[RMDB]
Structure probing data (2A3 and DMS) for a 177-nucleotide construct.
RNA sequence: GGGAACGACUCGAGUAGAGUCGAAAACUGCGUGAGCUUCCGAUCUCAGUAUUGUUUGGAAGGAUCAUUUGAUUAACGCGGUUUGAACAGUUUUUUGGAGCUUUUGAUUUCAAAUGUCUAAAAAACCAUUCUAACCUGGAUUCGUCCAGGUUAGAAUAAAAGAAACAACAACAACAAC
Reactivity to 2A3 in 0.01 (KOAc 150mM, MgCl2 10mM, bicine 150mM(pH8.5), 24C), signal-to-noise 8, nucleotides 027 to 126: c000u010g010c000g010u040g060a020g040c000u000u000c010c010g030a040u020c050u020c130a170g150u220a270u290u290g020u040u040u030g000g010a010a010g020g020a050u020c050a130u070u210u300g060a060u030u080a010a000c000g000c000g000g010u010u010u030g010a050a010c020a030g000u000u020u000u000u000u030g020g020a060g050c020u020u040u030u040g110a230u080u220u270c020a010a020a040u040g020u000c010u000a000a010a000a000a010a010c020c010
Reactivity to DMS in 0.01 (KOAc 150mM, MgCl2 10mM, bicine 150mM(pH8.5), 24C), signal-to-noise 4, nucleotides 027 to 126: c010u010g020c000g010u000g010a080g000c010u000u000c000c000g010a030u010c060u020c190a150g000u040a080u050u030g000u010u010u000g020g010a030a000g000g000a030u000c010a260u020u020u040g010a030u000u010a130a010c010g020c000g010g000u000u000u000g000a120a110c110a120g020u000u000u000u000u000u000g000g000a040g010c030u000u000u000u000g010a300u000u030u020c020a000a010a010u000g010u000c010u000a000a010a000a010a020a010c010c240
For 2A3 the reverse transcriptase was SuperScript II with manganese.
The reactions ran in a buffer of 150 mM KOAc, 10 mM MgCl2 and 150 mM bicine (pH 8.5), at 24 C.
Reactivities are given for positions 27 through 126.